[RMDB]
RNA sequence: GGGAACGACUCGAGUAGAGUCGAAAACCUACAUCAGAAGAAGUUAGUGACUAUGCUAACACUCUCACUCUUCUUAGUAGGAUGGCACAGAAGAGCAAUGCAAGGAUAAUAUCCUUUCAUAUGAUUAGGACUAUACGCAGUUCGCUGCGUAUAGUCCAAAAGAAACAACAACAACAAC
Reactivity to 2A3 in 0.01 (KOAc 150mM, MgCl2 10mM, bicine 150mM(pH8.5), 24C), signal-to-noise 2, nucleotides 027 to 126: c000c000u000a070c030a250u090c060a020g060a100a000g000a130a020g070u040u080a010g020u000g110a220c120u130a080u300g010c000u070a050a020c020a070c020u050c010u020c020a050c000u000c000u030u000c000u000u090a020g000u020a010g040g110a090u040g110g000c050a020c020a080g100a130a000g020a070g020c070a090a010u020g000c000a000a030g020g020a000u010a160a070u080a220u070c020c000u000u000u000c020a030u110a070u140g140a100u090u170a040
Reactivity to DMS in 0.01 (KOAc 150mM, MgCl2 10mM, bicine 150mM(pH8.5), 24C), signal-to-noise 2, nucleotides 027 to 126: c000c000u010a060c180a160u030c170a060g000a140a060g030a020a100g000u000u000a020g020u000g000a120c160u020a070u000g020c030u000a020a000c020a110c060u000c020u020c060a140c100u000c000u010u000c000u010u010a150g010u010a070g000g020a130u000g020g000c210a080c200a100g030a030a000g000a030g030c070a060a010u000g000c050a030a050g020g010a010u010a060a020u010a300u000c000c020u000u010u000c030a010u000a070u000g000a030u000u000a030